[RMDB]
RNA sequence: GGGAACGACUCGAGUAGAGUCGAAAAGUCAUCUUGCGUGGACCACGCUGGCGGGCAUCGGGCGGGUGGAGAGUCACCACGGAACCUACCGGGGCGCCACGAUUGCGCCCAAUGGGGAUGUAAGCCCCACGAGCCUUAAGUUCGCUUAAGGCUCGUGAAAAGAAACAACAACAACAAC
Reactivity to 2A3 in 0.01 (KOAc 150mM, MgCl2 10mM, bicine 150mM(pH8.5), 24C), signal-to-noise 1, nucleotides 027 to 126: g060u040c020a030u040c090u060u100g040c020g010u020g080g140a120c040c000a020c080g000c030u060g000g030c150g060g040g080c000a030u030c030g050g010g050c010g050g000g000u000g090g040a130g000a060g150u130c030a000c130c000a040c000g010g010a010a000c020c000u040a090c030c020g000g000g000g020c010g020c010c060a110c060g080a160u100u250g080c010g020c050c020c000a030a060u080g020g000g010g000a030u090g050u110a100a130g010c000c000c020
Reactivity to DMS in 0.01 (KOAc 150mM, MgCl2 10mM, bicine 150mM(pH8.5), 24C), signal-to-noise 2, nucleotides 027 to 126: g010u010c030a040u000c040u010u000g030c030g040u010g030g000a110c140c040a050c050g000c060u000g010g000c040g000g000g000c050a070u000c080g000g010g000c080g010g020g040u000g000g000a090g010a160g000u010c030a120c040c030a070c020g030g010a100a100c150c090u010a050c070c130g010g010g010g010c010g010c000c060a090c180g010a090u000u010g010c020g010c000c010c000a020a040u010g010g000g000g010a090u000g000u010a050a130g000c000c020c000
The record gives the reactivity of an RNA of 177 nucleotides to 2A3 and DMS. For DMS the reverse transcriptase was MarathonRT. The 2A3 profile rests on 1,016 reads. High DMS reactivity at an A or C suggests that its Watson-Crick edge is free. It was measured as part of the RMDB library OK2TRN. Conditions: 150 mM KOAc, 10 mM MgCl2 and 150 mM bicine (pH 8.5), 24 C. For DMS, 1,743 sequencing reads were counted.